RNA sequence: GGGAACGACUCGAGUAGAGUCGAAAACUGCAUCACCUGAUCACUGAUGGCUCAACGGUAUCCGGCGGUACAACUGAAUACUUGUACCUGCCUUUUGAGCGGGUUGGCUGCAAUCCGAAACGGAGAGAAAACCUAAUUACGUUCGCGUAAUUAGGAACAAAGCAACAUACUUCGGUAUGUUGCUUUGAAAAGAAACAACAACAACAAC
Reactivity to DMS in 0.01 (KOAc 150mM, MgCl2 10mM, bicine 150mM(pH8.5), 24C), signal-to-noise 3, nucleotides 027 to 156: c040u010g000c020a060u000c030a050c000c010u000g010a100u000c050a130c090u000g000a040u000g030g020c010u000c030a060a090c160g000g030u010a080u000c030c080g020g030c010g050g020u000a060c060a040a070c050u000g000a150a120u000a090c090u010u000g030u000a000c050c020u010g010c000c000u000u000u010u000g020a080g030c040g030g010g010u000u000g010g000c060u010g000c040a050a110u000c020c020g010a130a120a100c050g040g000a080g010a260g000a110a050a080a120c000c010u000a010a010u000u000a020c000g040u000u010c300g020c030g020u000a000a010u000u010a010g000g010a020a030
Reactivity to 2A3 in 0.01 (KOAc 150mM, MgCl2 10mM, bicine 150mM(pH8.5), 24C), signal-to-noise 4, nucleotides 027 to 156: c020u050g000c010a030u020c020a010c010c040u020g060a070u060c050a010c080u070g030a050u090g110g000c020u030c040a050a050c050g090g010u110a090u080c040c020g030g010c010g010g010u020a020c010a040a010c040u230g090a170a090u140a210c060u020u020g000u000a010c000c010u050g010c010c000u020u020u030u030g010a020g020c030g000g000g020u040u050g060g000c090u050g010c020a010a030u000c010c010g040a100a140a040c110g020g020a050g000a000g030a030a110a030a040c000c000u000a000a000u000u000a000c000g020u030u060c210g000c000g150u000a000a000u000u000a000g020g010a000a000